Structure probing data (DMS and 2A3) for a 207-nucleotide construct.
[RMDB]
RNA sequence: GGGAACGACUCGAGUAGAGUCGAAAAAGGAAGCAUUAAAACCAUUCGAGCUAGUCAAUGCGUGGCGUGUCUCUCCGCAGCGUGUUGGCGAAUGUAAAGAGUGACUAAGCAUGUAGUACCGAGGAUGAUAAGAGCAAUUCGUUCGCGAAUUGCUCAACGAAUUAUAUAGCUUCGGCUAUAUAAUUCGAAAAGAAACAACAACAACAAC
Reactivity to DMS in 0.01 (KOAc 150mM, MgCl2 10mM, bicine 150mM(pH8.5), 24C), signal-to-noise 3, nucleotides 027 to 156: a030g000g010a090a170g000c020a100u000u000a070a090a080a110c090c030a090u000u000c010g000a250g020c050u000a160g010u000c010a030a020u010g010c000g020u010g020g030c000g000u020g020u000c100u010c030u020c260c010g020c000a060g000c000g050u000g030u000u000g020g010c030g000a070a060u010g030u000a090a080a110g000a090g030u000g020a060c020u000a070a120g000c060a060u000g000u000a100g000u000a090c050c030g030a120g010g000a080u010g020a090u000a060a180g010a050g010c000a020a010u010u000c020g020u010u000c300g000c030g000a010a010u000u000g000c000u000c000a000a070
Reactivity to 2A3 in 0.01 (KOAc 150mM, MgCl2 10mM, bicine 150mM(pH8.5), 24C), signal-to-noise 6, nucleotides 027 to 156: a000g090g010a060a010g010c040a030u080u150a050a050a040a080c040c010a020u040u080c060g030a020g040c030u070a020g010u010c000a010a010u010g000c000g020u030g100g000c020g010u050g040u020c030u000c010u010c080c000g000c000a000g010c000g000u010g000u000u000g000g000c000g010a010a000u070g020u070a060a070a000g030a010g020u030g000a020c040u040a030a030g050c050a060u090g020u110a040g010u050a070c030c050g020a060g060g020a030u100g030a030u100a230a150g000a000g000c000a000a000u000u000c010g020u040u070c190g010c000g110a000a000u000u000g000c000u000c000a000a000

DMS adducts were read by reverse transcription with MarathonRT.